[RMDB]
RNA sequence: GGGAACGACUCGAGUAGAGUCGAAAAGUGUAUCCGGGUUUCCUCAAGCGGAUCGAGAUCUCCGGGACCGAGGGAUCGGCCAUCAUGGAGGAGGAGGAUUUCAAGGCCUGGACGUUUGCGAAGGAGAAACCAUUGGAAUAUUCGUAUUCCAAUGGUUAAAAGAAACAACAACAACAAC
Reactivity to DMS in 0.01 (KOAc 150mM, MgCl2 10mM, bicine 150mM(pH8.5), 24C), signal-to-noise 9, nucleotides 027 to 126: g010u010g010u010a090u000c000c000g010g010g010u000u010u000c010c000u000c040a100a180g010c070g010g000a050u000c070g000a210g000a080u000c060u000c000c010g010g010g010a060c040c020g000a140g000g020g000a110u000c010g000g000c030c030a090u010c070a100u010g010g000a070g010g000a090g000g010a090g010g000a070u000u000u000c120a100a210g000g000c020c000u000g000g010a040c090g010u000u010u010g010c050g000a110a080g010g010a140g000a150
Reactivity to 2A3 in 0.01 (KOAc 150mM, MgCl2 10mM, bicine 150mM(pH8.5), 24C), signal-to-noise 5, nucleotides 027 to 126: g030u060g030u070a070u030c000c000g050g000g000u030u130u030c010c010u030c040a080a040g070c050g060g010a020u040c070g030a040g020a120u020c010u010c030c020g040g050g150a260c020c010g020a040g030g050g010a060u020c020g040g000c030c000a120u150c030a070u220g140g010a060g010g000a030g040g030a030g040g020a090u070u090u170c060a070a020g030g000c000c000u000g020g020a030c040g030u070u140u160g040c030g030a070a020g080g050a060g080a060
An RNA of 177 nucleotides, treated with DMS and 2A3 and read out base by base. 2A3 adducts were read by reverse transcription with SuperScript II with manganese. The RNA was probed in 150 mM KOAc, 10 mM MgCl2 and 150 mM bicine (pH 8.5) at 24 C. For 2A3, 6,210 sequencing reads were counted.